[RMDB]
RNA sequence: GGGAACGACUCGAGUAGAGUCGAAAAACGCGGAGUACGCUCCGCGACAACACUUCUUUCGACCCGCUAACCGAGACCUAUGGGUCGUUAAAUUACGUCUCUAUCUUACUCACAGAACAUCGCACAAAAAACGUGGUUCGGUUCGCCGAACCACGAACAUUACAGGCACGUUCGCGUGCCUGUAAUGAAAAGAAACAACAACAACAAC
Reactivity to 2A3 in 0.01 (KOAc 150mM, MgCl2 10mM, bicine 150mM(pH8.5), 24C), signal-to-noise 3, nucleotides 027 to 156: a010c010g000c000g010g000a000g010u070a040c150g020c070u010c000c000g020c000g000a000c010a070a020c020a020c040u100u080c010u110u290u190c000g000a010c000c000c020g010c200u240a030a020c030c030g020a000g020a030c000c000u030a070u230g000g000g000u010c000g020u020u020a020a010a010u160u070a010c030g010u000c000u000c000u020a120u060c020u030u110a110c060u070c050a100c040a090g080a130a030c010a120u070c140g070c130a050c140a090a020a010a070a080a100c050g000u010g000g000u000u000c000g020g020u030u040c180g020c020c000g010a000a000c010c000a000c000g000a000a000
Reactivity to DMS in 0.01 (KOAc 150mM, MgCl2 10mM, bicine 150mM(pH8.5), 24C), signal-to-noise 1, nucleotides 027 to 156: a060c010g020c000g020g010a000g030u000a040c220g060c030u000c010c010g000c040g010a040c030a060a080c140a180c180u010u000c040u000u000u010c000g010a010c010c010c000g000c090u010a060a130c060c050g000a090g010a110c040c040u000a070u010g010g000g010u000c040g050u000u010a010a080a120u000u000a000c090g010u000c010u000c010u000a110u000c080u000u010a170c020u000c020a040c040a090g020a070a090c070a070u000c010g040c060a080c080a000a030a050a070a100a240c020g000u000g020g020u000u010c020g000g030u000u000c300g020c000c000g020a000a020c000c010a000c010g040a000a040
The data come from the RNA Mapping Database (RMDB), library M2RFPK. This 207-nucleotide RNA was probed chemically with 2A3 and DMS. 2A3 adducts were read by reverse transcription with SuperScript II with manganese. Values are in units of 0.01, from 0 to 300, in steps of 10. The reactions ran in a buffer of 150 mM KOAc, 10 mM MgCl2 and 150 mM bicine (pH 8.5), at 24 C.